[RMDB]
RNA sequence: GGGAACGACUCGAGUAGAGUCGAAAAUGGGGUCCAGUGGAUCCGUGGGACUACCCUCUCCACCCUCCCAACACACUCCUUCCCCCCUGCGGGGCUUCCCCAUAAGAUGGCAGGAACCCACUCAUUGAUAUCUCUUGCUUCGGCAAGAGAAAAAGAAACAACAACAACAAC
Reactivity to 2A3 in 0.01 (KOAc 150mM, MgCl2 10mM, bicine 150mM(pH8.5), 24C), signal-to-noise 2, nucleotides 027 to 129: u190g010g000g000g000u000c030c020a010g080u090g040g000a000u030c000c030g020u070g020g000g020a050c050u150a190c030c010c000u000c010u000c000c000a020c030c010c020u040c000c010c010a050a010c040a000c030a010c100u030c010c000u050u070c000c020c000c000c010c020u060g020c080g000g010g000g020c030u050u020c000c020c000c000a010u070a110a120g030a050u070g030g000c040a020g000g020a020a010c000c020c000a040c010u080c040a080u020u090g060a020u070a100
Annotation
Conditions: 150 mM KOAc, 10 mM MgCl2 and 150 mM bicine (pH 8.5), 24 C. The record gives the reactivity of an RNA of 170 nucleotides to 2A3. Values cover nucleotides 27 to 129. It was measured as part of the RMDB library 15KLIB. For 2A3, 8,067 sequencing reads were counted.